[RMDB]
Background
Conditions: 150 mM KOAc, 10 mM MgCl2 and 150 mM bicine (pH 8.5), 24 C. The record gives the reactivity of an RNA of 177 nucleotides to DMS. Values cover nucleotides 27 to 126. The data come from the RNA Mapping Database (RMDB), library TTRDEL. For DMS, 1,325 sequencing reads were counted. DMS adducts were read by reverse transcription with MarathonRT.
RNA sequence: GGGAACGACUCGAGUAGAGUCGAAAAGAUAUGGAGCCAUGGAGGCUGCAAACGCUUCGGAAACGAAGCGGACGUAUAGCCGAUGAAAUGGGCUCCUAAGUCAAACAAUGGUGUUCGCACCAUUGAAUCAUGAUCCUGAGUUCGCUCAGGAUCAUGAAAAAGAAACAACAACAACAAC
Reactivity to DMS in 0.01 (KOAc 150mM, MgCl2 10mM, bicine 150mM(pH8.5), 24C), signal-to-noise 2, nucleotides 027 to 126: g000a080u010a240u000g000g010a000g020c000c000a060u000g000g000a090g020g030c010u000g010c050a070a280a270c000g000c010u000u020c000g020g000a120a050a140c000g000a010a020g000c000g010g000a050c300g000u010a090u000a040g050c000c000g020a160u010g000a050a050a010u000g000g030g000c030u000c000c000u000a010a100g000u000c020a160a090a260c050a010a000u000g000g010u000g010u000u010c270g040c000a010c000c000a010u000u000g020a110a110